[RMDB]
RNA sequence: GGGAACGACUCGAGUAGAGUCGAAAAUCCAGAGCCUGCCUACGAUUGCCUGUAACGUCUACGGGAGAAUCAUUAAGGUACCAGCUAACUAUGAUCCUGAGCUAAGGACGUAUGCGACUACCGGCCCAGGCACGACUAAUGGCGUCUGGAACGGCACUACAUAACGUAAAUUCGUUUACGUUAUGUAAAAAGAAACAACAACAACAAC
Reactivity to DMS in 0.01 (KOAc 150mM, MgCl2 10mM, bicine 150mM(pH8.5), 24C), signal-to-noise 4, nucleotides 027 to 156: u000c010c000a130g020a130g000c010c000u000g000c040c020u000a090c040g000a090u000u010g030c000c000u010g000u000a090a120c120g020u000c050u000a120c050g020g010g000a100g020a070a060u000c030a070u000u020a110a140g030g010u000a040c070c060a140g040c040u000a110a090c060u000a050u000g010a250u000c010c000u010g020a150g030c120u010a070a080g010g000a040c060g020u000a060u010g040c010g010a180c050u000a040c020c030g010g020c040c030c030a040g000g040c010a050c050g010a200c080u000a090a130u000g030g030c020g010u010c020u000g000g010a040a020c040g000g000c040a080c040
Reactivity to 2A3 in 0.01 (KOAc 150mM, MgCl2 10mM, bicine 150mM(pH8.5), 24C), signal-to-noise 7, nucleotides 027 to 156: u020c000c000a000g010a020g050c020c030u080g030c060c020u060a050c060g070a140u070u110g000c000c000u050g040u080a130a050c040g070u010c090u060a030c030g000g000g030a050g140a070a030u040c030a040u100u150a110a040g050g000u030a110c030c050a030g040c020u050a040a050c040u030a030u140g030a150u030c010c010u030g040a050g100c070u120a080a050g010g010a000c000g020u030a050u140g050c030g050a050c040u060a060c030c040g040g000c020c020c010a010g000g030c010a020c030g080a020c050u150a120a080u230g030g010c000g030u000c000u010g000g000a010a000c020g060g000c060a010c080
Chemical mapping of a 207-nucleotide RNA with DMS and 2A3. The 2A3 profile rests on 5,865 reads. Reactivities are given for positions 27 through 156. The DMS profile rests on 8,590 reads. The data come from the RNA Mapping Database (RMDB), library OK3TST.